Chemical mapping of a 177-nucleotide RNA with 2A3 and DMS.
Reactivities are given for positions 27 through 126.
The RNA was probed in 150 mM KOAc, 10 mM MgCl2 and 150 mM bicine (pH 8.5) at 24 C.
The data come from the RNA Mapping Database (RMDB), library OK1LIB.
RNA sequence: GGGAACGACUCGAGUAGAGUCGAAAAUGCUGCAGACACAAUCCGGAAUGCUCAAGCUUCAGGUGAAGGGUUAACACAUGAGCAGUGCGUUGAUAACUGGAAAUCAUUUGCUGGAGUGAGAUUUGGCGUCUAUUGCUCACUUCGGUGAGCAAUAGACAAAAGAAACAACAACAACAAC
Reactivity to 2A3 in 0.01 (KOAc 150mM, MgCl2 10mM, bicine 150mM(pH8.5), 24C), signal-to-noise 1, nucleotides 027 to 126: u040g000c040u030g010c110a000g060a130c010a000c050a140a050u030c000c010g000g030a040a020u160g040c000u040c090a020a110g040c050u170u060c060a040g000g220u010g040a040a030g080g000g020u080u110a190a000c030a000c010a140u060g050a000g000c040a000g010u040g040c050g030u000u040g010a010u040a210a030c050u030g030g130a000a000a150u130c040a060u010u070u120g030c010u030g030g010a040g000u130g030a090g000a030u060u070u020g030g030c040
Reactivity to DMS in 0.01 (KOAc 150mM, MgCl2 10mM, bicine 150mM(pH8.5), 24C), signal-to-noise 2, nucleotides 027 to 126: u000g020c000u000g060c020a080g010a030c070a060c040a060a090u040c000c020g000g060a030a100u040g040c040u000c070a190a110g010c070u020u020c000a120g000g020u010g050a100a220g010g000g010u000u020a140a070c070a050c000a040u040g000a110g000c000a100g040u000g000c130g010u000u010g000a030u030a030a080c100u030g000g030a080a040a070u030c060a100u010u010u000g000c020u000g000g010a110g000u010g000a150g080a120u050u020u000g000g000c300